[RMDB]
RNA sequence: GGGAACGACUCGAGUAGAGUCGAAAAGGUCUGAUCUUCGGAUCAGACCAACUCUGAAUCCCAAUAGCUGCGUAUCUUGGCUAAGACGGAUAGGCGUUGCCACUCAGGGGGGUUUCGACCCCCCUAAGAACUAAUUACUGUUCGCAGUAAUUAGUUCAAAAGAAACAACAACAACAAC
Reactivity to DMS in 0.01 (KOAc 150mM, MgCl2 10mM, bicine 150mM(pH8.5), 24C), signal-to-noise 7, nucleotides 027 to 126: g000g010u000c000u010g010a000u000c000u000u010c190g020g010a010u000c000a010g000a000c000c000a010a020c050u010c020u000g000a180a100u000c000c000c010a160a250u000a020g010c010u000g010c240g010u010a080u010c110u000u000g000g010c010u000a020a030g000a150c230g000g000a030u000a070g000g000c020g010u000u000g010c020c010a150c270u010c150a030g010g010g010g010g010g010u000u000u000c150g010a040c000c000c000c000c000c000u000a000a040
Reactivity to 2A3 in 0.01 (KOAc 150mM, MgCl2 10mM, bicine 150mM(pH8.5), 24C), signal-to-noise 2, nucleotides 027 to 126: g000g010u020c000u000g020a000u000c010u000u080c200g040g000a010u000c000a000g010a000c010c000a000a000c000u020c000u030g050a070a110u010c000c000c010a000a010u010a000g020c010u070g020c050g110u110a100u160c070u100u160g010g000c010u020a010a000g030a000c010g010g000a020u020a030g050g000c010g080u080u070g150c000c000a020c030u110c020a000g000g020g000g000g000g000u000u050u050c030g060a040c000c000c010c010c020c000u010a030a010